[RMDB]
RNA sequence: GGGAACGACUCGAGUAGAGUCGAAAAUCACACCUGAGGAUGUUAAUAUGCAGAUUAUGGGUGUGGUUAUGCAGAGUGGUGUGAGAAAAGUUACAUAUGGUACUGCGCAUUGGUUGUUUGCGACCCUACACUCCUGCCUUCGGGCAGGAGAAAAGAAACAACAACAACAAC
Reactivity to 2A3 in 0.01 (KOAc 150mM, MgCl2 10mM, bicine 150mM(pH8.5), 24C), signal-to-noise 2, nucleotides 027 to 129: u000c010a000c000a000c000c000u000g080a070g180g000a060u120g000u180u090a270a030u100a140u300g000c000a000g020a060u080u030a180u300g000g050g040u000g000u010g000g000u000u040a220u110g030c000a020g000a020g300u040g000g000u040g000u050g000a080g000a050a000a000a000g130u070u050a040c030a000u130a100u230g120g060u000a080c000u000g000c050g000c020a000u050u050g050g000u030u110g000u000u040u050g010c000g000a000c000c000c000u030a010c110a030